[RMDB]
RNA sequence: GGGAACGACUCGAGUAGAGUCGAAAAUUUAAGAGCGAAGAUGUCUCUGUCACGAUACGAGUAAGUGACUCUCGUGUACUACUGACGAAUGAGACAGAGACAUUUAUGCUCAGUGUCAGUCAAGGAACUAUCUGUUUGGAUUCGUCCAAACAGAUAGAAAAGAAACAACAACAACAAC
Reactivity to DMS in 0.01 (KOAc 150mM, MgCl2 10mM, bicine 150mM(pH8.5), 24C), signal-to-noise 9, nucleotides 027 to 126: u010u010u010a110a120g010a010g010c010g010a190a150g000a010u000g000u000c000u000c000u000g000u000c000a090c070g010a090u000a070c020g000a070g010u000a030a070g010u000g000a080c090u010c160u010c160g000u000g010u010a040c060u000a060c030u010g010a110c060g000a110a050u010g000a090g010a010c000a000g000a010g010a010c010a000u000u000u000a090u020g000c000u000c010a080g000u010g010u000c070a060g010u000c090a070a090g010g010a090a150
Reactivity to 2A3 in 0.01 (KOAc 150mM, MgCl2 10mM, bicine 150mM(pH8.5), 24C), signal-to-noise 8, nucleotides 027 to 126: u120u140u090a160a030g000a000g000c030g040a040a020g010a050u000g010u020c010u000c010u000g000u000c010a010c080g050a010u030a090c010g000a010g020u060a150a140g050u110g230a060c020u020c010u020c070g110u100g030u050a070c030u010a020c020u050g140a080c030g070a110a080u160g020a060g000a060c000a000g000a000g000a000c000a000u000u010u010a050u050g000c000u000c000a000g010u020g070u050c040a030g030u040c040a050a070g070g010a090a070

Chemical mapping of a 177-nucleotide RNA with DMS and 2A3. The 2A3 profile rests on 16,568 reads. The RNA was probed in 150 mM KOAc, 10 mM MgCl2 and 150 mM bicine (pH 8.5) at 24 C. For 2A3 the reverse transcriptase was SuperScript II with manganese. DMS adducts were read by reverse transcription with MarathonRT. The data come from the RNA Mapping Database (RMDB), library M2PK90.